RNA sequence: GGGAACGACUCGAGUAGAGUCGAAAAUAAACUGUCUCAGGAAGUCAAGAUGCUCAAUAGCCACCUAAGCUUAAAGGAGCGGAAAUUACAAGAUCUCGAAGCUAAACUUCUCAAGUCAGACCAGAACCUGGACAUCAAGCUGGCGGACGCGACCAAAUCUAUCUCUCUCAUUCGUGAGAGAGAUAGAAAAAGAAACAACAACAACAAC
Reactivity to DMS in 0.01 (KOAc 150mM, MgCl2 10mM, bicine 150mM(pH8.5), 24C), signal-to-noise 2, nucleotides 027 to 156: u010a080a110a110c000u000g020u010c030u020c010a130g020g020a070a030g040u000c060a130a150g020a120u000g020c000u000c030a130a130u000a100g010c280c030a100c070c030u010a090a120g000c020u020u000a090a070a060g000g010a060g090c020g010g020a060a050a060u000u000a070c080a120a150g020a110u000c020u000c040g010a060a090g060c040u000a070a060a140c030u010u000c010u000c010a020a090g020u000c040a160g020a090c040c010a080g010a050a120c040c010u020g020g000a110c070a070u000c060a030a110g010c040u010g000g020c040g060g020a070c070g060c020g010a150c000c000a010a080a150
Reactivity to 2A3 in 0.01 (KOAc 150mM, MgCl2 10mM, bicine 150mM(pH8.5), 24C), signal-to-noise 3, nucleotides 027 to 156: u120a000a060a000c000u030g010u040c010u020c060a040g060g030a060a020g020u050c060a020a070g020a120u120g010c010u010c040a040a080u080a070g050c030c030a110c060c060u080a120a070g030c010u100u100a120a080a100g080g000a010g020c010g030g030a050a070a040u180u110a100c090a060a070g020a110u080c080u060c130g070a020a000g010c060u120a060a030a090c040u080u000c030u010c020a060a000g020u030c020a010g020a120c030c000a020g020a020a060c010c020u030g000g020a020c010a040u040c000a030a020g030c040u060g010g030c030g050g010a070c060g010c030g040a060c020c040a050a070a030